[RMDB]
RNA sequence: GGGAACGACUCGAGUAGAGUCGAAAAGAUAUGGAGCGGUGGACUCUUGGACCUCGGAAACGAGCUAGAGUAACCACACGCUCCUAAGUCAAACACGGCUGUUACUGUUCGCAGUAACAGCCGUGAAGUUGUAGAUCAGGUUCGCCUGAUCUACAACAAAAGAAACAACAACAACAAC
Reactivity to 2A3 in 0.01 (KOAc 150mM, MgCl2 10mM, bicine 150mM(pH8.5), 24C), signal-to-noise 2, nucleotides 027 to 126: g000a010u090a040u100g000g020a020g000c010g000g000u010g000g040a190c000u030c040u030u090g130g080a290c050c020u020c030g020g000a060a070a070c010g010a000g030c040u010a000g000a000g010u050a110a080c000c000a010c020a020c020g010c000u030c020c010u010a020a000g000u020c030a010a140a040c010a000c000g000g030c000u000g050u010u000a010c020u020g120u090u130c300g000c190a000g000u010a010a000c000a000g000c000c000g020u000g000a000a000
Reactivity to DMS in 0.01 (KOAc 150mM, MgCl2 10mM, bicine 150mM(pH8.5), 24C), signal-to-noise 2, nucleotides 027 to 126: g000a040u000a300u000g000g000a000g010c000g010g010u000g000g020a100c000u000c000u000u000g040g000a140c300c020u010c010g010g010a120a080a180c000g020a000g000c030u000a000g000a020g010u000a100a070c000c000a000c000a100c000g010c000u000c010c000u010a000a050g000u010c030a200a080a240c000a010c000g010g000c010u000g010u000u000a000c000u000g000u000u020c230g020c000a020g010u010a010a010c000a010g000c000c000g000u000g000a010a070
The data come from the RNA Mapping Database (RMDB), library TTRDEL. Structure probing data (2A3 and DMS) for a 177-nucleotide construct. For DMS, 2,058 sequencing reads were counted. DMS adducts were read by reverse transcription with MarathonRT. 2A3 adducts were read by reverse transcription with SuperScript II with manganese. Reactivities are given for positions 27 through 126.